The data come from the RNA Mapping Database (RMDB), library RNAMAK.
Chemical mapping of a 207-nucleotide RNA with 2A3.
Reactivities are given for positions 27 through 156.
2A3 adducts were read by reverse transcription with SuperScript II with manganese.
The 2A3 profile rests on 1,073 reads.

RNA sequence: GGGAACGACUCGAGUAGAGUCGAAAACAUUAACUGGUUCGCCAGUUAAUGAAAAAAGCGUACUACGCAGCCAACAACAGCUGGUCCCAAAUAGGACCAGACAUGUUGCGCUGAACUACGUAUCGCAAAAAUCAAGGACAGUUCGCUGUCCUUGAAAGAACAAAAAUCCGUUCGCGGAUUUUUGUUCAAAAGAAACAACAACAACAAC
Reactivity to 2A3 in 0.01 (KOAc 150mM, MgCl2 10mM, bicine 150mM(pH8.5), 24C), signal-to-noise 1, nucleotides 027 to 156: c000a000u000u000a000a000c000u000g000g040u090u070c070g000c020c000a000g000u000u010a000a000u000g000a030a060a000a000a000a000g020c000g000u040a070c010u010a000c030g030c010a000g000c010c000a010a020c010a000a010c020a030g000c000u010g000g020u040c000c010c080a030a140a140u300a040g300g000a000c000c000a010g070a050c010a110u030g020u000u000g030c150g010c000u010g000a010a010c040u090a000c090g020u010a020u300c070g000c030a030a090a000a000a090u010c000a000a000g010g000a000c000a000g020u110u190c270g090c160u000g020u010c010c000u010u030g000a000a000a000